[RMDB]
RNA sequence: GGGAACGACUCGAGUAGAGUCGAAAAGGCAAGCCCAGAGAACUGGUACUUGUAUCAUUUUAUACUGGCUCUCUCUGAUUCAAAUUUGGGGUAUAUGUGUGUGUUUCUGUUUUGUCUGUUUAUUUCAACCAGUUAAAAGACAGAGCACUUACUAUGACUAAUGGUCGAUAUUCGUAUCGACCAUUAGAAAAGAAACAACAACAACAAC
Reactivity to 2A3 in 0.01 (KOAc 150mM, MgCl2 10mM, bicine 150mM(pH8.5), 24C), signal-to-noise 5, nucleotides 027 to 156: g060g010c050a010a020g020c000c020c000a010g010a010g000a260a190c040u030g010g000u060a090c020u060u080g040u130a110u110c040a050u050u070u100u170a130u030a100c060u050g010g000c000u000c000u020c000u000c020u100g090a110u130u120c080a070a140a150u090u080u090g050g000g000g060u080a060u010a040u130g020u030g000u000g000u000g030u010u300u100c000u010g020u000u000u060u000g050u010c010u000g060u030u110u080a180u060u240u130c050a050a050c030c010a020g010u060u110a090a300a010a020g010a000c000a000g000a010g000c000a000c010u010u030a020c020u040a040u130g050a030
Reactivity to DMS in 0.01 (KOAc 150mM, MgCl2 10mM, bicine 150mM(pH8.5), 24C), signal-to-noise 2, nucleotides 027 to 156: g020g020c040a040a080g010c220c000c010a040g010a130g000a090a100c040u000g030g030u000a020c060u000u000g030u000a170u020c040a160u010u000u000u010a090u010a100c030u000g010g010c010u010c020u000c020u010c020u000g010a070u000u000c070a060a080a200u000u000u010g000g020g030g030u000a110u000a060u000g020u000g020u000g010u010g000u010u000u010c020u000g010u000u000u000u000g010u000c020u000g010u010u000u000a110u020u010u000c120a050a130c180c040a040g010u000u010a030a000a030a040g000a030c010a040g020a050g000c010a010c020u010u010a030c060u000a150u010g020a290

This 207-nucleotide RNA was probed chemically with 2A3 and DMS. The DMS profile rests on 5,010 reads. For 2A3, 2,117 sequencing reads were counted.